[RMDB]
RNA sequence: GGGAACGACUCGAGUAGAGUCGAAAACUCAUUCACGGUUACGUCUGUCUCUGGCAGAGCAGACUGUCAGGAGGAAGAGGUCACCAUCUUCACGAAGCCAAAGCCAAAUUCCGCCUUGUCCUGUAAACGGUAGUACGCUCUUCGGAGCGUACUACCGAAAAGAAACAACAACAACAAC
Reactivity to 2A3 in 0.01 (KOAc 150mM, MgCl2 10mM, bicine 150mM(pH8.5), 24C), signal-to-noise 1, nucleotides 027 to 126: c020u000c000a110u300u300c020a110c100g130g000u060u220a020c020g220u020c020u000g060u100c000u000c000u030g180g000c040a000g010a000g010c190a030g020a080c000u000g020u000c000a020g000g000a000g020g000a070a050g020a100g090g000u000c000a080c040c010a060u020c060u090u060c020a060c160g060a060a030g020c000c030a010a040a000g020c000c000a000a110a040u030u000c000c000g000c000c080u040u040g060u000c020c020u020g020u020a090a110a000

An RNA of 177 nucleotides, treated with 2A3 and read out base by base. Source: RMDB library OK1LIB, as collected in RNAgym. The reactions ran in a buffer of 150 mM KOAc, 10 mM MgCl2 and 150 mM bicine (pH 8.5), at 24 C. 2A3 adducts were read by reverse transcription with SuperScript II with manganese.